Structure probing data (2A3 and DMS) for a 207-nucleotide construct.
2A3 adducts were read by reverse transcription with SuperScript II with manganese.
Source: RMDB library M2RFPK, as collected in RNAgym.
For DMS, 2,523 sequencing reads were counted.
Conditions: 150 mM KOAc, 10 mM MgCl2 and 150 mM bicine (pH 8.5), 24 C.
The 2A3 profile rests on 2,484 reads.

RNA sequence: GGGAACGACUCGAGUAGAGUCGAAAAGAAAGAAAGAAAGAAACCGUCGCUGCUAGUCUCACGGUAACCACGUUGAAAUCGCAACGAAAGAAGCUCGCACUCAACUUCAACGGCUUAACGAGUGCAAAAAACUUACUGAUCUUCGGAUCAGUAAGAACAAUAGAGUGGUGUUCGCACCACUCUAUUGAAAAGAAACAACAACAACAAC
Reactivity to 2A3 in 0.01 (KOAc 150mM, MgCl2 10mM, bicine 150mM(pH8.5), 24C), signal-to-noise 3, nucleotides 027 to 156: g060a020a080a020g070a060a090a010g070a040a090a010g040a080a090a020c060c020g050u090c100g020c060u070g000c040u060a050g080u130c020u020c070a020c010g000g030u050a050a070c020c000a040c040g010u010u080g070a100a110a080u200c120g000c050a000a010c010g020a040a060a030g020a020a000g020c130u230c300g000c020a010c000u000c010a020a050c020u010u010c020a080a010c000g020g000c010u030u020a020a000c030g000a000g010u000g000c010a110a000a000a000a000a060c000u000u000a000c000u000g000a000u000c000u010u050c140g090g010a000u000c000a000g000u000a000a000g000a010a020
Reactivity to DMS in 0.01 (KOAc 150mM, MgCl2 10mM, bicine 150mM(pH8.5), 24C), signal-to-noise 2, nucleotides 027 to 156: g000a110a080a140g000a140a060a120g000a120a110a160g020a080a050a090c060c030g030u000c050g020c010u000g040c030u000a010g010u020c020u010c020a070c010g010g010u010a100a130c090c190a080c000g040u000u010g000a030a040a020u020c180g040c020a030a050c010g000a080a140a070g040a090a160g020c130u020c060g000c030a080c040u000c000a040a300c010u000u000c010a020a080c030g010g040c080u000u000a040a140c300g000a080g000u000g030c010a010a010a010a060a030a030c000u010u010a010c000u010g000a020u000c010u000u020c300g050g040a010u000c000a010g010u000a000a000g000a090a070